[RMDB]
RNA sequence: GGGAACGACUCGAGUAGAGUCGAAAAUCAUUAAAUUUUGGAUGAGAUUUGUCCAAUGGGUCAACGAAAUGUUCAAUCUCUGCCAUCAAAAAUUCACGGACUCUUAAUAAACCGGCCCUUGGGGAAAGCUGACGUAUACGUUCGCGUAUACGUCAGCAAAAGAAACAACAACAACAAC
Reactivity to 2A3 in 0.01 (KOAc 150mM, MgCl2 10mM, bicine 150mM(pH8.5), 24C), signal-to-noise 2, nucleotides 027 to 126: u010c000a000u070u230a170a160a140u100u100u030u120g040g000a020u040g000a070g030a150u020u080u280g070u000c000c000a000a100u090g110g000g000u000c030a010a110c090g180a150a000a270u200g040u140u170c020a150a000u020c000u030c010u040g160c000c000a010u040c070a300a150a040a000a070u080u080c090a000c040g060g000a030c000u000c000u120u040a050a100u060a250a200a110c040c030g070g000c000c000c000u000u020g000g000g000g030a090a000a000